The record gives the reactivity of an RNA of 177 nucleotides to 2A3 and DMS. It was measured as part of the RMDB library OK1LIB. DMS adducts were read by reverse transcription with MarathonRT.
RNA sequence: GGGAACGACUCGAGUAGAGUCGAAAAGGUCUCUGGUUCAAGUCCAGGAUGGCCCAGCUGCGCCAGGGAAAAGAAUAGAAGAAGCAUCUGACUACUUCAUGCAUGCUCCACUUGGCUCGGGGGGAUAUGAUCUAACGCGUUUCGACGCGUUAGAUCAAAAAGAAACAACAACAACAAC
Reactivity to 2A3 in 0.01 (KOAc 150mM, MgCl2 10mM, bicine 150mM(pH8.5), 24C), signal-to-noise 2, nucleotides 027 to 126: g060g070u030c070u030c000u120g040g000u000u100c000a050a100g020u000c000c000a010g000g090a150u030g030g040c020c000c000a100g110c020u040g000c020g000c020c000a030g040g040g040a050a150a000a020g060a150a050u200a120g100a120a000g030a040a000g070c000a100u100c000u060g070a110c140u100a210c050u300u100c030a010u200g200c000a000u000g010c010u060c000c020a050c060u070u050g030g000c010u040c020g000g000g000g000g040g000a050u040a020
Reactivity to DMS in 0.01 (KOAc 150mM, MgCl2 10mM, bicine 150mM(pH8.5), 24C), signal-to-noise 1, nucleotides 027 to 126: g030g000u000c000u100c000u000g020g000u070u040c280a160a160g000u040c000c000a030g000g030a100u010g000g000c010c080c010a130g000c000u030g000c040g050c020c000a020g040g000g000a010a180a130a110g000a090a080u000a080g030a050a180g000a110a000g000c000a300u010c270u000g000a190c090u000a030c030u000u000c040a130u000g000c190a010u010g070c180u000c040c080a110c110u000u010g030g000c020u000c040g000g000g000g040g000g000a110u000a010